Annotation: Structure probing data (2A3 and DMS) for a 177-nucleotide construct. Source: RMDB library TTRINS, as collected in RNAgym.
RNA sequence: GGGAACGACUCGAGUAGAGUCGAAAAGAUAUGGACGGUGAACUACAGGGAACUGGAGCGUUGAAACAGACUUAGUCGGAAACGACUAAGUCUGUGGAGCUCCUCAGUACCUGCACCGUCCUAAGUCGCAUAUGUACUACUUCGGUAGUACAUAUGCAAAAGAAACAACAACAACAAC
Reactivity to 2A3 in 0.01 (KOAc 150mM, MgCl2 10mM, bicine 150mM(pH8.5), 24C), signal-to-noise 2, nucleotides 027 to 126: g060a040u140a060u150g010g000a010c020g000g030u010g020a090a070c100u220a090c300a000g040g020g000a040a000c030u010g000g000a010g000c060g230u300u190g110a100a060a010c000a000g020a000c000u010u000a000g000u000c000g030g010a020a080a080c000g000a000c010u010a000a000g000u000c000u000g000u000g010g000a000g020c000u010c000c000u000c000a000g000u000a000c000c000u010g000c000a000c000c000g010u000c000c000u000a010a010g020u010c090
Reactivity to DMS in 0.01 (KOAc 150mM, MgCl2 10mM, bicine 150mM(pH8.5), 24C), signal-to-noise 3, nucleotides 027 to 126: g000a050u010a280u000g010g000a020c040g000g000u000g000a100a040c050u040a300c020a010g020g010g000a200a200c180u010g000g000a010g010c000g020u000u030g020a240a200a030c020a000g010a010c000u000u000a010g000u000c000g010g000a110a060a190c020g000a000c000u000a000a000g000u000c000u000g010u000g000g000a070g000c000u000c000c010u000c010a010g010u000a130c010c010u010g000c000a010c010c010g020u000c000c000u010a010a080g000u000c090